[RMDB]
Structure probing data (2A3 and DMS) for a 177-nucleotide construct. DMS adducts were read by reverse transcription with MarathonRT. Values cover nucleotides 27 to 126.
RNA sequence: GGGAACGACUCGAGUAGAGUCGAAAAGGUCGGAACAGCGCCGUGCACAAGGGGAUCUGCAAAGCACGGCACGUAAGCACUCAGAUGCGAAAGUAGGAACUGCGUUAGGCGUCCAGACGCAGGUAGCCCUCAGAGUAGAGUUCGCUCUACUCUGAGGAAAAGAAACAACAACAACAAC
Reactivity to 2A3 in 0.01 (KOAc 150mM, MgCl2 10mM, bicine 150mM(pH8.5), 24C), signal-to-noise 5, nucleotides 027 to 126: g040g010u110c040g030g040a060a050c020a060g050c000g000c020c010g010u030g000c030a040c070a280a150g080g020g010g060a110u080c040u060g040c060a080a040a030g010c010a020c020g020g000c020a000c010g000u050a060a030g020c000a010c040u120c080a040g050a200u060g020c010g060a130a050a010g090u140a070g040g040a070a040c000u010g000c000g030u020u020a080g060g000c020g040u020c000c020a020g000a020c000g000c000a000g000g000u020a040g010c000
Reactivity to DMS in 0.01 (KOAc 150mM, MgCl2 10mM, bicine 150mM(pH8.5), 24C), signal-to-noise 4, nucleotides 027 to 126: g010g000u020c030g010g000a070a080c110a090g000c060g000c020c020g020u000g000c050a080c150a080a090g000g010g020g020a060u040c060u050g020c110a090a080a110g030c000a040c010g000g000c020a010c030g000u020a130a120g000c040a070c020u020c090a070g010a090u010g020c010g000a080a050a080g000u050a120g010g000a080a110c000u010g000c010g000u000u010a100g000g020c050g000u020c010c030a170g010a020c020g000c000a010g010g000u010a110g000c170